[RMDB]
RNA sequence: GGGAACGACUCGAGUAGAGUCGAAAACAACUUUCGAGUUGGAACAAACCUUUGUGCAUAAAUGCCAUAGGGAGCCAGAUGUAGCCCAUUGGGCUAGUAAGUGGCGAAGAACUAUGGCCACUUUAUGCACUCUGGUGCGAAGUGGAUUCGUCCACAAGAGUCUAUUUGUGUUCGCACAAAUAGACUCAAAAGAAACAACAACAACAAC
Reactivity to DMS in 0.01 (KOAc 150mM, MgCl2 10mM, bicine 150mM(pH8.5), 24C), signal-to-noise 2, nucleotides 027 to 156: c010a010a030c020u000u000u010c090g030a230g010u000u010g010g010a050a180c110a120a190a110c000c000u000u010u000g030u010g000c020a060u000a060a110a040u000g030c050c010a010u010a010g010g000g030a300g020c000c000a040g000a200u010g000u010a030g030c000c000c010a300u010u010g040g010g000c000u010a010g020u010a110a250g040u010g030g090c000g020a100a100g000a130a240c000u000a020u000g000g030c000c030a000c020u010u010u000a040u010g030c030a020c000u010c050u020g010g010u000g030c150g030a120a100g020u020g000g040a130u000u030c090g020u000c010c000a040c010a080a300
Reactivity to 2A3 in 0.01 (KOAc 150mM, MgCl2 10mM, bicine 150mM(pH8.5), 24C), signal-to-noise 4, nucleotides 027 to 156: c010a000a020c000u080u210u210c180g100a020g020u010u000g050g060a110a080c050a060a110a020c010c010u020u010u010g000u000g000c010a000u020a010a010a040u300g000c010c000a000u000a010g010g010g020a010g000c010c000a070g000a140u160g100u160a000g000c000c020c050a130u170u300g000g000g000c020u010a010g030u060a080a210g090u010g020g010c020g020a080a020g000a020a020c000u010a000u000g010g000c020c010a010c000u000u000u000a000u000g000c000a000c000u000c000u000g020g000u030g030c070g060a220a030g010u000g010g000a020u060u080c200g070u040c080c010a020c010a020a040
An RNA of 207 nucleotides, treated with DMS and 2A3 and read out base by base.
For DMS, 2,803 sequencing reads were counted.
For 2A3 the reverse transcriptase was SuperScript II with manganese.
The data come from the RNA Mapping Database (RMDB), library RNAMAK.
Reactivities are given for positions 27 through 156.
For DMS the reverse transcriptase was MarathonRT.